[RMDB]
RNA sequence: GGGAACGACUCGAGUAGAGUCGAAAACACGAACGUUGGCUAAUCCUGGUCGGACAUCAGGUGGUUAGUGCAGUGGCAUAAGCCACCUUGGCGCUAAUAGAUACUAAUCGUAGCAUAGCUGAAUAAAACCAUAGCCGAUAUUCGUAUCGGCUAUGGUAAAAGAAACAACAACAACAAC
Reactivity to 2A3 in 0.01 (KOAc 150mM, MgCl2 10mM, bicine 150mM(pH8.5), 24C), signal-to-noise 4, nucleotides 027 to 126: c060a010c010g070a140a000c040g030u120u070g040g000c020u030a060a090u040c010c020u010g020g010u060c110g030g090a020c000a060u060c030a010g020g000u020g000g010u090u050a040g000u000g000c010a050g050u130g170g000c020a090u070a300a000g000c000c000a000c000c000u020u060g100g010c000g020c000u020a000a020u070a150g070a020u110a070c050u110a070a050u070c050g070u030a030g040c020a040u030a040g000c030u040g070a110a040u170a120a080a000
Reactivity to DMS in 0.01 (KOAc 150mM, MgCl2 10mM, bicine 150mM(pH8.5), 24C), signal-to-noise 4, nucleotides 027 to 126: c070a150c140g010a110a130c170g010u000u000g010g030c060u000a020a080u020c050c030u010g000g020u000c090g020g000a130c120a040u050c060a040g020g000u010g000g000u000u000a180g010u000g020c000a180g020u040g010g020c000a030u000a100a190g010c000c030a000c000c030u010u020g000g010c010g000c000u000a040a050u030a080g000a060u000a060c140u030a050a080u020c060g000u010a040g020c030a110u010a050g010c020u010g000a100a060u030a040a060a090